Notes
An RNA of 177 nucleotides, treated with 2A3 and DMS and read out base by base. Conditions: 150 mM KOAc, 10 mM MgCl2 and 150 mM bicine (pH 8.5), 24 C. DMS adducts were read by reverse transcription with MarathonRT. 2A3 adducts were read by reverse transcription with SuperScript II with manganese. The data come from the RNA Mapping Database (RMDB), library RFMREP.
[RMDB]
RNA sequence: GGGAACGACUCGAGUAGAGUCGAAAAGGUGCUUUCGAGCACCAAAAAAGUGUGAUGAUUUACUCCCGGACCGAGCAAUGCUGUGAGGACUACUUACCCGGCUGACAAAAAGGUUGGUUCGCCAACCCACCAUCAAUUGUUUCGACAAUUGAUGGUGAAAAGAAACAACAACAACAAC
Reactivity to 2A3 in 0.01 (KOAc 150mM, MgCl2 10mM, bicine 150mM(pH8.5), 24C), signal-to-noise 2, nucleotides 027 to 126: g040g000u010g010c010u030u070u110c140g030a000g010c000a000c000c000a020a140a000a000a000a000g130u120g010u020g030a100u010g050a060u080u110u150a050c020u030c020c010c000g020g030a040c020c020g010a020g090c030a100a090u130g000c020u020g060u070g050a050g000g040a040c030u050a020c010u070u060a070c010c000c000g090g000c060u040g040a050c070a040a100a020a020a010g020g010u010u020g000g040u030u060c080g010c050c000a000a000c000c000
Reactivity to DMS in 0.01 (KOAc 150mM, MgCl2 10mM, bicine 150mM(pH8.5), 24C), signal-to-noise 4, nucleotides 027 to 126: g000g010u010g000c010u000u000u010c160g010a040g010c000a000c010c000a010a030a060a070a040a050g030u000g030u000g010a070u010g000a100u000u010u000a090c100u000c010c020c000g010g000a080c070c050g010a090g020c090a080a050u000g020c030u010g010u010g010a120g010g000a060c090u000a030c080u000u000a110c040c020c000g010g000c030u000g000a080c180a060a040a080a080a070g010g000u000u000g010g020u000u010c240g000c010c000a010a010c010c030